[RMDB]
RNA sequence: GGGAACGACUCGAGUAGAGUCGAAAACGAAACACAGUGAGUGGACGGAAGAAAUCCCCUUCCCACCUCCCCACUGUCCACUCACUGUCUUCCUAAGAGGAAAUAUAAAUCGGGGGUGGGAAGGGGACACGGAUCAGCAUUUCGAUGCUGAUCCGUGAAAAGAAACAACAACAACAAC
Reactivity to 2A3 in 0.01 (KOAc 150mM, MgCl2 10mM, bicine 150mM(pH8.5), 24C), signal-to-noise 3, nucleotides 027 to 126: c100g030a050a060a000c100a000c000a020g010u000g000a000g000u030g000g010a000c000g000g060a020a000g060a080a180a050u060c000c000c000c000u000u020c000c000c000a000c000c000u020c080c080c070c070a030c040u070g000u010c000c000a010c000u010c000a000c000u000g000u000c000u040u000c020c000u020a050a060g040a010g200g170a040a090a010u300a040u050a080a140a020u170c110g010g000g000g000g000u000g000g000g000a000a000g000g000g000g000a000
The record gives the reactivity of an RNA of 177 nucleotides to 2A3. Source: RMDB library OK1LIB, as collected in RNAgym. The reactions ran in a buffer of 150 mM KOAc, 10 mM MgCl2 and 150 mM bicine (pH 8.5), at 24 C.